Description
Chemical mapping of a 177-nucleotide RNA with DMS and 2A3. The 2A3 profile rests on 3,848 reads.
RNA sequence: GGGAACGACUCGAGUAGAGUCGAAAAUGCCGCGGCUACGGUUCGGCGACAUCGUGCGGGUGGGGUCAGCCGAUGAGCACCUGCAGAGCACAUGGUGUUCGGGCAUCCUGGGCAAGCCACUGGUGCGCCUCGAUGUGAGAUUCGUCUCACAUCGAGGAAAAGAAACAACAACAACAAC
Reactivity to DMS in 0.01 (KOAc 150mM, MgCl2 10mM, bicine 150mM(pH8.5), 24C), signal-to-noise 2, nucleotides 027 to 126: u010g010c030c000g040c070g000g000c000u000a070c080g000g010u000u000c030g000g000c020g020a080c120a070u030c050g030u000g010c080g000g020g020u020g000g000g020g020u050c100a160g020c040c000g000a090u070g000a030g000c000a070c000c030u030g020c100a140g020a130g000c070a080c070a070u020g030g040u000g000u000u000c020g000g000g000c010a030u030c020c030u020g000g000g000c040a030a110g030c000c050a120c140u000g010g000u010g000c050g020
Reactivity to 2A3 in 0.01 (KOAc 150mM, MgCl2 10mM, bicine 150mM(pH8.5), 24C), signal-to-noise 4, nucleotides 027 to 126: u100g030c000c010g050c030g050g010c020u060a070c110g010g050u040u100c040g060g000c020g040a040c020a070u100c070g060u110g030c050g010g040g020u080g040g030g010g010u050c020a020g030c010c030g080a180u120g020a010g000c020a010c000c000u030g000c040a080g040a040g130c070a050c020a070u140g010g000u010g010u010u000c000g000g020g000c020a070u030c000c030u020g050g010g040c040a070a030g010c000c010a050c040u060g050g000u050g040c060g020

The DMS profile rests on 3,384 reads.